[RMDB]
RNA sequence: GGGAACGACUCGAGUAGAGUCGAAAAAUUUCAUUCAAGAAGAAGGUAACGGAGAAAGGAGCGGGCCUCCCGAUCCGAGUGGUCCACGGCGUAUCAAGUUUGGAGUCAUCCGGCCGAAGGGUUGAGAUAAGGCGCCACUUCGGUGGCGCCAAAAGAAACAACAACAACAAC
Reactivity to 2A3 in 0.01 (KOAc 150mM, MgCl2 10mM, bicine 150mM(pH8.5), 24C), signal-to-noise 1, nucleotides 027 to 129: a000u090u040u100c090a070u000u010c000a000a000g020a000a010g000a000a000g050g000u060a000a000c030g000g000a000g000a010a050a000g060g100a000g010c170g100g000g040c000c000u150c000c000c000g000a000u000c000c000g100a020g010u200g000g000u000c000c010a010c010g030g000c150g170u070a000u170c100a000a230g170u000u140u210g000g000a000g000u000c000a030u120c000c000g130g000c000c000g210a240a000g070g000g000u130u000g010a050g000a110u070a020a080
Structure probing data (2A3) for a 170-nucleotide construct. Values cover nucleotides 27 to 129.